[RMDB]
Chemical mapping of a 177-nucleotide RNA with DMS and 2A3.
Values cover nucleotides 27 to 126.
The reactions ran in a buffer of 150 mM KOAc, 10 mM MgCl2 and 150 mM bicine (pH 8.5), at 24 C.

RNA sequence: GGGAACGACUCGAGUAGAGUCGAAAAGAUAUGGAGCUGAUGUCGAAGAACACCACUACCCACCUCGGAAACGAGAGGUGGUGGGAGACACAAUGGCUCCUAAGUCAAACCAAGGUUCGCCUUGGAAGAUGUUUGGAAUGUUCGCAUUCCAAACAUCAAAAGAAACAACAACAACAAC
Reactivity to DMS in 0.01 (KOAc 150mM, MgCl2 10mM, bicine 150mM(pH8.5), 24C), signal-to-noise 2, nucleotides 027 to 126: g020a010u000a300u010g020g010a000g040c000u000g000a100u000g000u000c010g010a140a090g000a130a150c160a100c010c010a020c000u020a070c060c020c140a230c190c010u010c000g010g000a010a130a120c000g010a010g000a040g000g010u000g010g030u000g000g000g000a050g000a020c050a010c070a090a140u020g020g000c000u000c000c000u000a020a120g000u000c000a080a090a170c000c000a010a020g020g010u000u000c190g010c010c000u000u000g000g000a100a020
Reactivity to 2A3 in 0.01 (KOAc 150mM, MgCl2 10mM, bicine 150mM(pH8.5), 24C), signal-to-noise 3, nucleotides 027 to 126: g020a010u100a000u140g000g000a010g000c020u070g070a220u060g170u030c050g080a250a060g060a250a000c080a050c040c000a010c000u070a060c070c020c020a210c110c000u020c010g010g020a090a040a040c020g000a010g010a050g040g000u010g020g000u000g000g020g030a060g010a000c020a020c020a020a240u180g030g000c000u000c010c010u000a040a020g010u010c030a050a020a070c000c000a000a010g040g000u040u130c270g090c100c000u000u020g000g040a020a060